An RNA of 177 nucleotides, treated with 2A3 and DMS and read out base by base. 2A3 adducts were read by reverse transcription with SuperScript II with manganese. The reactions ran in a buffer of 150 mM KOAc, 10 mM MgCl2 and 150 mM bicine (pH 8.5), at 24 C. For DMS, 2,652 sequencing reads were counted.

RNA sequence: GGGAACGACUCGAGUAGAGUCGAAAAGCUCUAGGAGACUAGAGCGAUACGUUAGAGAGCUCGUGGCGUGACUAACGGAUAGCCAGGUACGAGGUUGCCAGAGGACAUAGCUAUAGCUAUGUCCAAAGAGCUAACAUACGUUCGCGUAUGUUAGCUCAAAAGAAACAACAACAACAAC
Reactivity to 2A3 in 0.01 (KOAc 150mM, MgCl2 10mM, bicine 150mM(pH8.5), 24C), signal-to-noise 2, nucleotides 027 to 126: g000c000u050c000u000a010g050g000a050g010a080c010u000a000g000a000g000c000g000a000u000a000c020g000u110u040a010g030a020g000a060g080c020u080c030g000u140g030g020c010g010u020g000a030c010u020a070a010c030g030g030a120u050a010g060c020c000a060g000g000u010a050c080g110a030g040g020u060u030g040c070c000a090g000a040g100g020a000c000a000u000a000g000c000u140a030u020a300g020c000u020a000u000g000u000c000c000a000a000a000
Reactivity to DMS in 0.01 (KOAc 150mM, MgCl2 10mM, bicine 150mM(pH8.5), 24C), signal-to-noise 2, nucleotides 027 to 126: g010c000u000c000u000a010g000g000a200g040a270c000u000a000g000a000g010c020g000a030u040a040c100g010u000u000a040g020a120g000a190g020c030u000c030g020u010g000g000c010g020u000g020a170c000u000a000a060c090g000g030a070u000a070g000c000c040a120g020g010u010a060c110g000a040g010g020u000u000g000c000c000a150g020a300g000g010a020c000a020u000a000g000c030u020a090u050a160g000c000u010a010u000g000u000c020c000a000a020a030